[RMDB]
The record gives the reactivity of an RNA of 177 nucleotides to 2A3 and DMS. The reactions ran in a buffer of 150 mM KOAc, 10 mM MgCl2 and 150 mM bicine (pH 8.5), at 24 C. 2A3 adducts were read by reverse transcription with SuperScript II with manganese. Source: RMDB library OK2TRN, as collected in RNAgym.
RNA sequence: GGGAACGACUCGAGUAGAGUCGAAAAACCGCAAGGACAGGCUCAGGGCGCCGUCAUGAUGGUCUACGGCCUGGACCACGACACUUCCAACACGGAUAAGCUCUUCAAUUUGGUUUGCCUGUACGGAUACGAUGGUCGUAUUCGUACGACCAUCGUAAAAAGAAACAACAACAACAAC
Reactivity to 2A3 in 0.01 (KOAc 150mM, MgCl2 10mM, bicine 150mM(pH8.5), 24C), signal-to-noise 2, nucleotides 027 to 126: a000c030c010g010c060a050a120g070g010a000c020a020g000g010c020u070c140a020g040g000g000c020g000c040c000g050u000c020a040u220g060a100u040g010g000u000c020u030a040c120g100g010c000c000u060g010g040a030c000c020a020c000g060a020c030a020c040u140u070c070c030a100a070c050a030c100g030g010a040u050a120a040g000c020u010c000u130u120c070a130a250u170u090u230g140g030u060u080u090g030c000c030u000g000u040a040c030g000g050a030
Reactivity to DMS in 0.01 (KOAc 150mM, MgCl2 10mM, bicine 150mM(pH8.5), 24C), signal-to-noise 4, nucleotides 027 to 126: a100c010c010g020c230a130a150g010g000a080c030a050g000g010c010u000c200a080g000g010g030c060g000c050c030g020u000c110a100u010g010a120u000g000g030u000c010u000a090c140g010g000c080c070u000g000g000a060c010c010a070c150g000a080c090a080c210u010u000c060c030a070a160c240a050c060g000g010a040u000a110a160g020c040u000c030u000u000c130a050a140u000u000u000g020g000u010u000u010g000c020c010u000g030u000a020c040g000g000a130
The 2A3 profile rests on 2,612 reads.